[RMDB]
RNA sequence: GGGAACGACUCGAGUAGAGUCGAAAACAUCAUGGUUAUAUUAGACUAGUUGGUCAUAUUACUGGUCAGAAUCUGAGUAAAUAUAUUACUUUUCAUUCUAUGACGUUUGAGAACAGAAACAAUAAUGCUGAUUUGCAAUCAACCUUAGACUUAAAUGUAGUUGCAAGUAAUUCGUUACUUGCAACUAAAAAGAAACAACAACAACAAC
Reactivity to DMS in 0.01 (KOAc 150mM, MgCl2 10mM, bicine 150mM(pH8.5), 24C), signal-to-noise 3, nucleotides 027 to 156: c040a030u000c020a050u000g020g020u000u000a080u000a090u010u010a150g020a040c000u000a060g040u000u010g020g030u010c120a130u000a140u000u000a050c030u010g000g000u010c040a080g020a070a060u000c060u000g000a080g010u000a010a080a190u000a180u010a220u010u000a020c010u000u000u000u000c000a040u010u000c010u000a070u010g020a040c020g030u000u000u000g020a150g020a060a180c050a120g030a120a070a100c070a070a130u000a050a080u000g010c020u000g010a070u000u000u000g020c100a190a100u000c060a050a030c020c060u000u000a090g010a110c080u000u010a050a070a300u000g010
Reactivity to 2A3 in 0.01 (KOAc 150mM, MgCl2 10mM, bicine 150mM(pH8.5), 24C), signal-to-noise 5, nucleotides 027 to 156: c030a020u120c020a040u060g050g000u090u080a080u020a050u210u170a080g010a030c020u010a030g080u040u090g050g010u050c020a010u050a030u110u090a050c040u060g010g010u030c020a020g060a060a030u040c050u100g040a010g020u030a010a110a040u210a030u090a090u160u080a070c000u070u060u020u070c030a020u030u010c030u110a130u150g040a040c090g060u020u040u090g050a040g010a040a000c010a050g080a040a100a030c070a050a100u130a150a040u080g030c020u030g040a150u050u060u110g010c050a020a040u050c010a020a030c000c000u020u040a040g040a090c020u110u120a090a090a060u160g020
Notes: This 207-nucleotide RNA was probed chemically with DMS and 2A3. 2A3 adducts were read by reverse transcription with SuperScript II with manganese. High DMS reactivity at an A or C suggests that its Watson-Crick edge is free. The reactions ran in a buffer of 150 mM KOAc, 10 mM MgCl2 and 150 mM bicine (pH 8.5), at 24 C. Values cover nucleotides 27 to 156.